[RMDB]
RNA sequence: GGGAACGACUCGAGUAGAGUCGAAAACAGUGGCUGAUUCGUCAGCCACUGAAAAAACCUUUGUGCCAUUGGGAGUCGUGUACUAGCCCAUUGGGCUAGGUACCGACGACGAUCAAUGGCACUCUGGUAAAAAGGCGAUGUCUUCGGACAUCGCCAAGAUUCUGUCCCUAUUCGUAGGGACAGAAUCAAAAGAAACAACAACAACAAC
Reactivity to 2A3 in 0.01 (KOAc 150mM, MgCl2 10mM, bicine 150mM(pH8.5), 24C), signal-to-noise 2, nucleotides 027 to 156: c000a000g000u000g000g000c020u000g010a080u060u220c180g070u030c130a000g020c020c000a000c000u000g000a000a000a000a000a000a000c000c000u020u010u020g010u020g010c000c000a000u020u010g000g000g020a020g020u000c000g000u020g000u090a010c000u000a010g000c030c010c090a300u140u300g010g000g000c020u010a080g000g080u030a020c030c040g110a010c000g000a000c010g000a050u020c000a000a000u020g000g000c000a000c000u000c010u020g000g000u050a060a090a030a000a000g020g010c020g000a000u000g010u000c000u060u190c300g060g000a000c000a000u020c030g000c010c000a010a010
This 207-nucleotide RNA was probed chemically with 2A3. Source: RMDB library RNAMAK, as collected in RNAgym. Reactivities are given for positions 27 through 156.